[RMDB]
Structure probing data (DMS and 2A3) for a 177-nucleotide construct.
RNA sequence: GGGAACGACUCGAGUAGAGUCGAAAAGGCUGACUGUAGCUGGGGGAAGACGGUCUACUCAUCUGCUCUCUCCUUUCAGCCAGCGGGCUGUCUUCCCAGGUGUAGAUCACCUAUUCUAACUUCACCUGUAAUGAUGAACAUUCGUGUUCAUCAUUACAAAAGAAACAACAACAACAAC
Reactivity to DMS in 0.01 (KOAc 150mM, MgCl2 10mM, bicine 150mM(pH8.5), 24C), signal-to-noise 7, nucleotides 027 to 126: g010g020c070u010g010a080c020u000g010u010a120g010c020u000g000g010g010g000g020a040a020g000a030c050g000g000u020c130u020a110c190u010c190a110u020c030u000g000c110u000c040u000c110u000c020c020u000u010u020c030a020g010c060c090a040g000c060g010g020g000c010u000g000u010c040u000u000c000c010c000a040g010g010u000g000u010a130g000a120u020c030a040c050c040u000a100u030u020c120u010a090a100c090u020u010c060a090c170c080u000
Reactivity to 2A3 in 0.01 (KOAc 150mM, MgCl2 10mM, bicine 150mM(pH8.5), 24C), signal-to-noise 9, nucleotides 027 to 126: g030g000c040u020g020a210c020u060g080u110a040g030c000u020g030g000g000g010g070a010a000g000a000c010g000g020u020c050u100a140c060u070c100a200u040c030u040g060c040u010c000u010c020u030c030c010u030u140u170c020a010g000c010c000a020g010c030g020g010g000c000u010g000u000c000u010u000c000c000c000a000g000g010u020g020u060a080g020a210u150c010a020c020c010u030a130u100u090c040u030a060a140c030u060u070c070a070c070c030u010